[RMDB]
RNA sequence: GGGAACGACUCGAGUAGAGUCGAAAAAAGGAAGGAAAAUCCCUCUGUAGCUCAGAGAGAGAAGAUCGUUUAUCACAUUCGUGGACGUGCAGGUGCUCGCGUACGUUCUGAUAAUGGAUGCGAGUCACUCAUGGACGAUGUUCGCAUCGUCCAUGAGAAAAGAAACAACAACAACAAC
Reactivity to 2A3 in 0.01 (KOAc 150mM, MgCl2 10mM, bicine 150mM(pH8.5), 24C), signal-to-noise 5, nucleotides 027 to 126: a000a000g170g050a020a020g040g090a050a030a000a130u020c010c040c000u000c000u000g090u080a030g040c010u050c070a000g020a000g010a000g010a000g050a080a020g020a060u050c020g070u050u110u160a100u100c050a040c040a180u040u110c080g020u020g030g010a010c020g000u020g010c070a050g010g070u120g040c020u050c050g050c020g020u030a020c020g000u020u000c050u050g040a050u120a240a010u020g030g000a010u020g010c020g000a010g060u100c030a020
Reactivity to DMS in 0.01 (KOAc 150mM, MgCl2 10mM, bicine 150mM(pH8.5), 24C), signal-to-noise 2, nucleotides 027 to 126: a070a010g020g010a070a060g000g000a070a020a120a120u000c030c010c000u000c050u010g030u000a140g010c250u040c030a010g000a020g000a050g020a040g040a080a050g000a160u010c010g030u000u010u010a060u020c040a090c040a090u030u000c040g000u020g010g000a020c030g030u010g010c050a040g020g000u030g000c010u000c030g000c060g000u000a040c030g020u000u000c190u040g000a080u090a030a030u000g000g000a000u020g000c010g000a010g000u040c030a100
Structure probing data (2A3 and DMS) for a 177-nucleotide construct. The reactions ran in a buffer of 150 mM KOAc, 10 mM MgCl2 and 150 mM bicine (pH 8.5), at 24 C. As a SHAPE reagent, 2A3 marks flexible, mostly unpaired nucleotides at the ribose 2'-OH.